[RMDB]
RNA sequence: GGGAACGACUCGAGUAGAGUCGAAAAGAUAUGGACCACAGGCUAGCGUACCAUCGGAAACGAUGGAAUACGCUUGGACCCUGGUGGUCCUAAGUCAAAAGUUAAACAUACUUCGGUAUGUUUAACACCGUAUAAUAGGGUUCGCCCUAUUAUACGGAAAAGAAACAACAACAACAAC
Reactivity to DMS in 0.01 (KOAc 150mM, MgCl2 10mM, bicine 150mM(pH8.5), 24C), signal-to-noise 9, nucleotides 027 to 126: g000a010u000a010u010g000g000a030c000c000a030c010a020g000g000c000u000a000g040c000g030u000a070c000c010a010u000c000g020g000a010a010a010c000g010a010u000g000g000a100a140u000a010c000g030c000u000u000g020g010a010c300c010c000u000g010g030u010g020g000u000c000c000u000a000a070g000u010c000a070a080a150a140g000u000u000a000a010a000c000a010u000a000c000u000u010c180g030g010u000a000u000g000u000u000u000a000a000c000a170
Reactivity to 2A3 in 0.01 (KOAc 150mM, MgCl2 10mM, bicine 150mM(pH8.5), 24C), signal-to-noise 5, nucleotides 027 to 126: g010a000u010a000u050g000g000a000c000c000a000c010a010g010g000c010u020a010g000c000g000u000a020c000c000a010u000c000g000g000a010a000a000c010g000a000u010g010g000a020a080u120a000c000g000c000u030u130g010g000a000c000c000c000u180g150g160u030g010g000u040c000c000u000a000a000g000u000c010a000a060a050a150g010u010u010a000a010a000c010a010u010a010c010u030u050c170g140g000u010a000u000g010u010u000u000a000a000c000a010
This 177-nucleotide RNA was probed chemically with DMS and 2A3. The DMS profile rests on 26,792 reads. The reactions ran in a buffer of 150 mM KOAc, 10 mM MgCl2 and 150 mM bicine (pH 8.5), at 24 C. It was measured as part of the RMDB library TTRDES. The 2A3 profile rests on 64,242 reads.